RNA sequence: GGGAACGACUCGAGUAGAGUCGAAAACAACGCAAAGCGACACUUGCGCUUGACUUAUUAGAGAAAGACGCAUUACAGACUCAAGUAUGGGUGUCAUACAAUGAACUAUGGACUUCGAUGAUAAACCAGACCUUACUAUUGACUACUGAUGAAGACAUCGUUAGCCACUGUUCGCAGUGGCUAACGAAAAAGAAACAACAACAACAAC
Reactivity to 2A3 in 0.01 (KOAc 150mM, MgCl2 10mM, bicine 150mM(pH8.5), 24C), signal-to-noise 1, nucleotides 027 to 156: c000a000a000c000g000c070a060a030a120g000c020g120a060c000a030c050u040u000g010c100g000c050u040u020g030a060c010u080u140a180u100u110a300g030a080g030a000a060a000g130a080c030g000c050a000u020u270a110c000a030g130a050c000u050c120a000a050g000u010a070u000g060g000g110u060g050u030c010a000u100a020c030a030a120u280g030a020a020c070u140a150u150g000g000a040c100u000u060c050g020a030u060g040a050u120a010a070a000c020c000a060g020a020c020c000u080u000a050c100u040a060u180u010g110a060c000u070a000c000u070g030a030u090g000a050a010g150a020c000a120
Structure probing data (2A3) for a 207-nucleotide construct.
It was measured as part of the RMDB library OK3TST.
The RNA was probed in 150 mM KOAc, 10 mM MgCl2 and 150 mM bicine (pH 8.5) at 24 C.
For 2A3, 404 sequencing reads were counted.